[RMDB]
RNA sequence: GGGAACGACUCGAGUAGAGUCGAAAAGCACAGCGGCACGAUGGCACGGCGUGCCGCGCGUGGCGUACUGGCCAGCACCAACCCGCGGGUGACUAGCCGGUAAUCACGAGUGAUCCGGUGCCACGCGCCAUUAAGCAAGUUUCGACUUGCUUAAUGGAAAAGAAACAACAACAACAAC
Reactivity to 2A3 in 0.01 (KOAc 150mM, MgCl2 10mM, bicine 150mM(pH8.5), 24C), signal-to-noise 9, nucleotides 027 to 126: g110c050a030c060a110g000c010g010g000c000a000c010g020a050u090g020g000c010a000c020g020g000c010g010u000g000c010c000g000c010g000c000g000u010g010g030c110g020u060a010c000u000g000g000c000c010a000g000c000a000c010c010a030a170c020c030c050g070c130g050g000g010u030g030a300c000u000a010g000c000c000g000g000u010a010a010u030c010a000c030g020a050g080u130g070a110u080c020c020g100g040u060g000c000c000a010c020g080c040g020
Reactivity to DMS in 0.01 (KOAc 150mM, MgCl2 10mM, bicine 150mM(pH8.5), 24C), signal-to-noise 9, nucleotides 027 to 126: g010c080a110c070a230g010c010g010g000c010a020c010g000a030u000g000g000c020a030c030g010g010c020g010u000g000c010c010g010c010g010c010g020u010g000g010c300g010u010a020c010u000g010g010c010c020a020g010c000a020c000c000a050a120c060c040c080g020c130g000g010g010u000g000a140c000u000a050g010c000c000g010g010u000a050a060u000c010a020c030g010a150g020u010g000a080u010c010c010g020g020u000g020c010c010a090c300g010c180g000
Source: RMDB library OK2TRN, as collected in RNAgym. Chemical mapping of a 177-nucleotide RNA with 2A3 and DMS. The DMS profile rests on 25,504 reads. The 2A3 profile rests on 48,468 reads. 2A3 adducts were read by reverse transcription with SuperScript II with manganese.